[RMDB]
RNA sequence: GGGAACGACUCGAGUAGAGUCGAAAACCGAGAAGCUUCGGCUUCUCGGAAAUAAAGUGCGUAAUAAAUCAGGAAACUGAACUGCAAAGCACAAGCAGAAAAAAACCGUCUUGUUCGCAAGACGGAACUAUGGAGAAAAGUUCGCUUUUCUCCAUAGAAAAGAAACAACAACAACAAC
Reactivity to 2A3 in 0.01 (KOAc 150mM, MgCl2 10mM, bicine 150mM(pH8.5), 24C), signal-to-noise 4, nucleotides 027 to 126: c010c010g000a000g000a010a000g020c030u110u170c250g030g000c000u000u010c070u000c000g010g030a010a000a000u110a010a110a010g010u010g000c020g070u040a030a100u070a260a180a060u040c000a000g010g040a040a030a040c030u010g010a060a030c010u000g000c010a050a070a080g000c010a000c010a000a020g020c010a000g180a060a070a010a000a000a010a030c000c000g010u000c000u000u030g010u030u100c170g000c090a000a000g000a000c010g000g000a000a000
Reactivity to DMS in 0.01 (KOAc 150mM, MgCl2 10mM, bicine 150mM(pH8.5), 24C), signal-to-noise 4, nucleotides 027 to 126: c000c010g010a010g010a010a000g020c000u000u010c190g030g010c010u000u000c000u010c000g020g000a010a040a050u010a050a110a140g010u000g010c000g020u010a080a060u000a050a060a100u010c000a020g010g010a130a110a210c010u000g000a030a090c020u000g000c000a040a090a120g020c010a000c010a130a170g000c010a010g010a010a000a050a080a090a110a090c000c000g010u000c000u000u000g000u000u020c200g010c010a010a000g000a000c000g000g000a020a030